About this RNA: The data come from the RNA Mapping Database (RMDB), library TTRINS. Structure probing data (DMS and 2A3) for a 177-nucleotide construct. DMS adducts were read by reverse transcription with MarathonRT. 2A3 adducts were read by reverse transcription with SuperScript II with manganese. The DMS profile rests on 6,055 reads. The 2A3 profile rests on 14,370 reads.
RNA sequence: GGGAACGACUCGAGUAGAGUCGAAAAGAUAUGGAGCAGUAUGCCGAUCCGAGGAUCAUGUUCUUGAAUUCGGAAACGAAUUCAAGAACAUGGGAGGAUCGGAACUACAUAAACUGCUCCUAAGUCACCAUUUUCAUAAGUUCGCUUAUGAAAAUGGAAAAGAAACAACAACAACAAC
Reactivity to DMS in 0.01 (KOAc 150mM, MgCl2 10mM, bicine 150mM(pH8.5), 24C), signal-to-noise 4, nucleotides 027 to 126: g010a060u000a300u010g000g000a010g010c010a030g020u000a030u000g010c000c000g000a010u000c010c000g000a080g020g010a070u010c010a000u000g000u000u000c000u000u010g000a010a000u000u000c000g010g000a160a120a250c000g020a030a000u000u000c000a000a010g010a000a000c000a000u000g000g010g010a040g020g010a010u000c000g000g000a010a010c110u010a300c060a040u000a050a090a150c010u000g000c000u000c000c000u000a000a070g000u000c050a300
Reactivity to 2A3 in 0.01 (KOAc 150mM, MgCl2 10mM, bicine 150mM(pH8.5), 24C), signal-to-noise 3, nucleotides 027 to 126: g030a020u100a050u220g010g000a000g000c000a000g010u100a020u100g020c010c000g000a000u000c010c000g060a300g050g010a010u010c000a000u010g000u000u000c000u000u020g000a010a000u000u010c010g030g030a080a050a060c000g010a000a000u010u000c000a000a000g000a000a010c010a000u000g000g000g010a010g000g010a000u000c010g000g000a000a000c000u060a000c000a020u170a050a300a040c010u000g000c000u020c010c000u010a060a000g020u010c010a020